[RMDB]
Chemical mapping of a 207-nucleotide RNA with 2A3 and DMS. For 2A3 the reverse transcriptase was SuperScript II with manganese. Values cover nucleotides 27 to 156. It was measured as part of the RMDB library RSTRND. DMS (dimethyl sulfate) methylates the pairing face of unpaired adenines and cytosines.
RNA sequence: GGGAACGACUCGAGUAGAGUCGAAAAGCUGACAUUUGAAAGAAUGCAGUGGCCAGGCUAAUCACCUGGGUAUGGACAUAACGUCGAGAGAUGAUACAAUGGGCUAUCCGCAUCCUUUCCCUUCAUACGCAUAGUAUAUGGAAAAGGUUCAGAGACUGACAACUAGUAGGUUCGCCUACUAGUUGUCAAAAGAAACAACAACAACAAC
Reactivity to 2A3 in 0.01 (KOAc 150mM, MgCl2 10mM, bicine 150mM(pH8.5), 24C), signal-to-noise 3, nucleotides 027 to 156: g010c000u010g050a110c050a030u020u030u090g170a110a090a040g020a020a000u000g000c000a010g000u010g030g050c010c010a000g020g000c010u030a030a030u040c010a020c030c010u010g000g000g000u070a080u130g080g020a010c010a050u120a080a020c180g050u020c040g030a010g000a010g020a090u090g010a040u080a170c090a060a110u080g040g030g000c000u050a030u070c020c020g000c060a080u070c000c010u010u030u000c000c010c000u050u050c110a020u030a030c020g010c040a050u040a190g030u010a000u000a020u120g000g000a000a030a010a060g020g000u040u070c050a020g030a010g030a160c090u060
Reactivity to DMS in 0.01 (KOAc 150mM, MgCl2 10mM, bicine 150mM(pH8.5), 24C), signal-to-noise 2, nucleotides 027 to 156: g000c010u010g010a160c010a020u010u030u020g010a170a080a180g030a060a040u000g000c000a220g030u000g000g000c010c040a050g020g040c000u000a230a190u020c070a050c010c030u000g000g010g020u010a030u010g020g030a300c060a160u000a040a090c060g030u000c040g030a180g000a210g000a040u000g010a150u000a000c060a090a070u010g000g000g010c080u000a130u000c000c000g020c040a030u030c020c000u000u000u000c000c000c000u000u010c160a050u000a030c010g000c250a150u010a200g020u000a060u000a080u000g000g000a020a020a030a020g020g020u010u010c010a020g010a120g010a110c150u000